[RMDB]
RNA sequence: GGGAACGACUCGAGUAGAGUCGAAAAGAUUGGGAACCGUCUCCACUUCACCCAGACCUUUGCCAUGAGCGAGAAGCAAUCCAGACAAGUUUUUCUCACUGCACCUUUUGAUGGCAUCCUGGGCCUGCCUAACCCGGUAGUUCGCUACCGGGUUAGGAAAAGAAACAACAACAACAAC
Reactivity to DMS in 0.01 (KOAc 150mM, MgCl2 10mM, bicine 150mM(pH8.5), 24C), signal-to-noise 1, nucleotides 027 to 126: g000a080u020u010g010g000g020a100a190c080c050g000u010c000u000c030c050a110c080u010u000c080a170c030c020c050a000g010a040c070c050u010u020u000g040c000c000a050u010g000a090g000c070g000a030g010a050a050g000c070a080a090u000c070c110a110g020a060c100a070a090g000u000u000u010u000u020c020u000c040a040c040u010g000c110a040c160c120u000u010u020u020g010a100u010g010g000c050a030u010c050c040u010g000g000g020c000c000u000g000
Reactivity to 2A3 in 0.01 (KOAc 150mM, MgCl2 10mM, bicine 150mM(pH8.5), 24C), signal-to-noise 2, nucleotides 027 to 126: g020a050u100u130g050g000g020a030a040c030c020g170u040c050u030c020c000a080c040u040u060c050a030c030c010c030a030g040a130c040c060u080u090u120g030c000c020a070u070g110a050g060c070g010a040g000a030a010g040c020a040a010u050c070c020a010g060a190c050a140a120g020u050u010u000u070u050c000u020c010a030c030u030g060c040a100c000c030u040u140u060u210g150a040u040g010g010c000a030u090c000c010u000g000g050g040c020c020u060g000

Chemical mapping of a 177-nucleotide RNA with DMS and 2A3. For DMS the reverse transcriptase was MarathonRT. High DMS reactivity at an A or C suggests that its Watson-Crick edge is free. It was measured as part of the RMDB library OK2TST.